[RMDB]
RNA sequence: GGGAACGACUCGAGUAGAGUCGAAAAGUUAAGGAUGUCAUAUAUAGAUAGGAUUGACUCAAUAUUAAGGAAAGACGUUGUUAUGAGAGGAUUUAUAACAGCGAAUACUAUAAUUAAUGUCCUCGAACCUCAAUACUCCGUUCGCGGAGUAUUGAGGAAAAGAAACAACAACAACAAC
Reactivity to 2A3 in 0.01 (KOAc 150mM, MgCl2 10mM, bicine 150mM(pH8.5), 24C), signal-to-noise 1, nucleotides 027 to 126: g070u050u040a020a000g010g050a020u150g020u030c050a000u050a040u070a000u080a260g130a060u050a030g210g000a080u070u120g020a000c000u000c030a030a050u130a060u280u050a020a000g160g000a220a000a000g080a010c060g000u000u010g000u000u000a000u050g030a060g000a020g010g130a070u050u140u000a030u070a000a000c000a000g000c000g000a040a010u120a050c030u050a040u070a270a010u100u050a000a030u140g050u000c000c000u020c000g050a030a070
Reactivity to DMS in 0.01 (KOAc 150mM, MgCl2 10mM, bicine 150mM(pH8.5), 24C), signal-to-noise 1, nucleotides 027 to 126: g000u010u000a000a000g030g000a000u000g000u040c000a000u000a200u020a200u050a050g020a040u020a090g020g020a120u000u000g000a000c020u000c060a060a010u000a070u000u000a030a080g030g000a170a110a010g020a170c020g000u000u000g000u020u000a000u020g000a120g040a100g040g000a090u020u000u050a000u000a030a000c030a000g000c070g050a080a120u040a110c050u000a040u010a100a180u000u000a050a070u000g000u000c000c000u000c040g040a090a150